This 207-nucleotide RNA was probed chemically with 2A3 and DMS. Source: RMDB library RSTRND, as collected in RNAgym. For DMS, 4,237 sequencing reads were counted. 2A3 adducts were read by reverse transcription with SuperScript II with manganese.
RNA sequence: GGGAACGACUCGAGUAGAGUCGAAAAGACUAAACCUUGAUCCCGGUCACGGGGUGAAGAGGGAAAUCUAACAGUGACUGGGCCCGUCGGCGACUUGUUCGCGUGAUCGCCGGGGCCGAGAAAAUCACAGCGAACUCCCCGGCUGACAGCGCGGGCGCAUAUAAUUCAGCUUCGGCUGAAUUAUAUGAAAAGAAACAACAACAACAAC
Reactivity to 2A3 in 0.01 (KOAc 150mM, MgCl2 10mM, bicine 150mM(pH8.5), 24C), signal-to-noise 3, nucleotides 027 to 156: g050a010c030u070a140a140a080c010c000u020u080g010a010u050c010c010c000g010g010u010c010a010c030g000g020g000g000u010g010a020a020g000a020g060g040g050a040a090a040u170c170u160a080a020c010a010g000u000g010a000c010u000g030g000g000c000c000c000g050u020c020g010g020c000g000a010c020u080u210g000u020u000c000g000c000g010u030g020a160u020c000g000c000c010g020g000g000g000c010c000g010a010g000a030a010a000a000u120c070a060c080a110g030c020g030a010a020c010u080c000c000c000c000g000g020c050u110g080a080c030a130g020c130g020c030g060g010g000c040g000
Reactivity to DMS in 0.01 (KOAc 150mM, MgCl2 10mM, bicine 150mM(pH8.5), 24C), signal-to-noise 2, nucleotides 027 to 156: g010a110c020u000a050a070a150c000c000u000u020g000a110u000c000c000c000g060g010u000c150a120c030g040g010g000g010u000g010a130a130g000a030g010g010g000a100a100a080u010c070u000a120a300c040a090g000u000g000a050c020u000g020g010g020c010c000c020g010u000c030g000g010c000g010a030c040u000u010g010u000u010c060g000c040g030u020g000a120u000c020g010c010c000g040g000g030g050c110c040g030a090g010a060a050a110a140u000c040a080c070a070g020c080g000a030a070c040u000c060c000c000c010g030g030c010u000g000a110c060a140g000c010g010c020g010g010g030c140g020